[RMDB]
RNA sequence: GGGAACGACUCGAGUAGAGUCGAAAAGGAGAUCGGGGUGGUAAAGAACAGCUGAUUGCGCUCGUACGCCAAAGGUUCUGUCACGAUAUAUCUGUUGAUGGUCCGUUCUUUCAGUUGCGCUUCGAUCCUUCUGAUAAUGGUUCGCCAUUAUCAGAAGAAAAGAAACAACAACAACAAC
Reactivity to DMS in 0.01 (KOAc 150mM, MgCl2 10mM, bicine 150mM(pH8.5), 24C), signal-to-noise 7, nucleotides 027 to 126: g000g010a090g010a010u000c010g030g010g010g010u000g000g000u040a020a030a050g010a070a110c040a140g010c030u010g000a150u030u010g010c060g000c040u030c200g010u030a160c080g010c040c090a040a090a180g010g000u010u000c010u000g010u010c020a030c050g000a090u040a100u020a070u030c070u010g000u010u000g010a020u000g000g010u010c120c050g000u010u010c040u010u010u030c050a060g000u000u010g010c060g000c020u010u000c000g010a090u010c030
Reactivity to 2A3 in 0.01 (KOAc 150mM, MgCl2 10mM, bicine 150mM(pH8.5), 24C), signal-to-noise 7, nucleotides 027 to 126: g140g020a090g000a010u030c030g000g010g030g020u060g030g070u210a120a140a030g100a050a030c010a000g000c010u040g010a110u070u120g010c050g010c050u130c200g120u200a090c080g030c020c000a030a120a050g020g000u190u070c010u020g010u000c010a010c050g020a010u050a010u020a080u260c130u140g080u100u050g060a010u020g000g030u050c050c000g060u240u160c000u060u060u010c030a010g000u030u050g070c010g000c000u000u000c000g010a030u030c000
Source: RMDB library OK1LIB, as collected in RNAgym. The record gives the reactivity of an RNA of 177 nucleotides to DMS and 2A3. The DMS profile rests on 22,787 reads. High DMS reactivity at an A or C suggests that its Watson-Crick edge is free. Conditions: 150 mM KOAc, 10 mM MgCl2 and 150 mM bicine (pH 8.5), 24 C. Reactivities are given for positions 27 through 126.